[RMDB]
The record gives the reactivity of an RNA of 177 nucleotides to DMS and 2A3. The 2A3 profile rests on 4,663 reads. The DMS profile rests on 4,178 reads. The reactions ran in a buffer of 150 mM KOAc, 10 mM MgCl2 and 150 mM bicine (pH 8.5), at 24 C.
RNA sequence: GGGAACGACUCGAGUAGAGUCGAAAACAUGGAUCGUUCGCGAUCCAUGGCAGGUGGUGGUGGGACCAGCCGACCCUGGCUUUUGGCAUCCCAGCCUUUCCAAUCCAGCCUAUUUCGAUAGGCUGAAGACAUUCGUAGUUUUCGAACUACGAAUGUCAAAAGAAACAACAACAACAAC
Reactivity to DMS in 0.01 (KOAc 150mM, MgCl2 10mM, bicine 150mM(pH8.5), 24C), signal-to-noise 3, nucleotides 027 to 126: c010a000u000g000g000a010u000c000g020u000u010c200g030c020g000a000u000c000c000a000u000g010g030c190a040g000g000u000g020g030u010g010g010u000g010g000g010a120c030c040a080g010c030c010g010a170c150c170c060u000g020g010c040u000u010u010u010g010g000c060a080u010c010c010c020a170g000c000c020u010u000u000c010c020a130a180u010c080c000a010g000c010c000u000a010u000u000u010c160g010a020u000a000g000g000c000u000g000a040a050
Reactivity to 2A3 in 0.01 (KOAc 150mM, MgCl2 10mM, bicine 150mM(pH8.5), 24C), signal-to-noise 4, nucleotides 027 to 126: c000a010u010g010g000a010u000c030g020u100u090c230g020c010g150a010u000c000c010a000u000g010g030c120a060g000g120u090g030g030u050g030g300u070g000g050g020a010c010c020a010g020c010c020g110a250c040c030c060u090g030g000c010u210u140u130u210g030g000c030a070u040c010c000c000a010g020c010c000u020u010u000c010c010a010a040u060c070c000a000g000c000c000u010a020u010u100u070c170g070a020u000a000g000g000c000u010g010a010a020